Chemical mapping of a 207-nucleotide RNA with 2A3 and DMS. The 2A3 profile rests on 2,634 reads. 2A3 adducts were read by reverse transcription with SuperScript II with manganese. The data come from the RNA Mapping Database (RMDB), library ARCHII.

RNA sequence: GGGAACGACUCGAGUAGAGUCGAAAACCUUCCUCGCGGCUAGACACGGAUUGCACGCCCUUUGGGCAAGGGAUAGUUCUCUAUUCCGCACCGUGCCCUGUUGUGGCAACCGUCUUUCCUCCGUCGUAAAUUUGUCCUGGGCAGAGCUGUCUGCCCGCCAUAAGCAAGAGUUCGCUCUUGCUUAUGGAAAAGAAACAACAACAACAAC
Reactivity to 2A3 in 0.01 (KOAc 150mM, MgCl2 10mM, bicine 150mM(pH8.5), 24C), signal-to-noise 4, nucleotides 027 to 156: c000c010u000u060c020c040u050c030g010c020g030g000c040u080a030g030a080c050a020c090g060g090a260u080u100g020c070a030c070g000c020c010c020u160u190u260g010g000g010c050a080a050g000g000g000a010u010a020g070u280u100c200u000c010u070a010u020u020c010c010g010c020a080c020c070g040u060g000c010c000c010u100g010u130u060g030u110g010g010c010a010a060c030c010g010u040c040u070u060u020c010c020u060c030c030g050u080c030g040u160a010a090a180u170u110u170g080u070c010c020u050g000g000g000c010a010g000a040g030c090u100g100u160c000u000g010c000c000c000g000
Reactivity to DMS in 0.01 (KOAc 150mM, MgCl2 10mM, bicine 150mM(pH8.5), 24C), signal-to-noise 1, nucleotides 027 to 156: c040c040u000u000c030c030u010c040g030c030g000g000c020u000a070g020a040c030a050c050g020g010a070u010u000g050c000a160c150g000c020c010c040u000u000u000g020g050g010c040a130a210g000g010g010a020u000a020g000u010u000c260u000c020u000a060u000u010c000c020g000c060a110c040c020g040u000g020c010c000c030u000g040u000u010g020u000g010g010c040a110a070c050c030g020u020c020u010u010u000c070c010u000c020c030g020u000c030g000u000a050a060a190u000u000u000g000u000c030c030u010g030g040g040c000a070g000a050g010c100u020g000u010c000u000g010c010c010c020g000
Conditions: 150 mM KOAc, 10 mM MgCl2 and 150 mM bicine (pH 8.5), 24 C.